[RMDB]
RNA sequence: GGGAACGACUCGAGUAGAGUCGAAAAGCAACUCGGUUCGCCGAGUUGCAAAUAUAAUCAGCGGUAAAUUCGAGGCGUAAAUUACCGCUGAACGCCUCGAUAAAAGUCUUCAGUUCGCUGAAGACAACUGUCUCAUAUGGUUCGCCAUAUGAGACAGAAAAGAAACAACAACAACAAC
Reactivity to DMS in 0.01 (KOAc 150mM, MgCl2 10mM, bicine 150mM(pH8.5), 24C), signal-to-noise 1, nucleotides 027 to 126: g030c010a000a030c000u010c020g010g010u000u030c230g030c000c000g000a010g010u020u000g010c010a020a000a040u000a130u010a090a190u000c020a040g010c000g000g020u000a030a040a110u000u000c030g040a090g020g000c090g000u010a040a060a090u020u000a050c030c010g040c030u000g000a010a060c100g000c010c000u000c080g000a080u010a020a030a130a090g000u000c000u010u000c000a020g020u000u010c210g000c020u000g000a010a000g010a010c000a050a080
Reactivity to 2A3 in 0.01 (KOAc 150mM, MgCl2 10mM, bicine 150mM(pH8.5), 24C), signal-to-noise 2, nucleotides 027 to 126: g000c000a000a010c020u000c010g000g040u060u110c190g040c060c000g000a000g010u000u000g000c010a000a000a000u030a000u000a020a170u030c020a010g030c030g050g040u050a070a120a170u170u060c050g020a080g120g010c030g020u050a010a130a050u090u070a060c000c000g020c020u000g000a000a000c030g020c010c000u060c020g000a020u070a090a080a010a040g000u020c000u000u010c000a010g030u040u100c160g010c070u010g000a000a000g000a000c000a030a050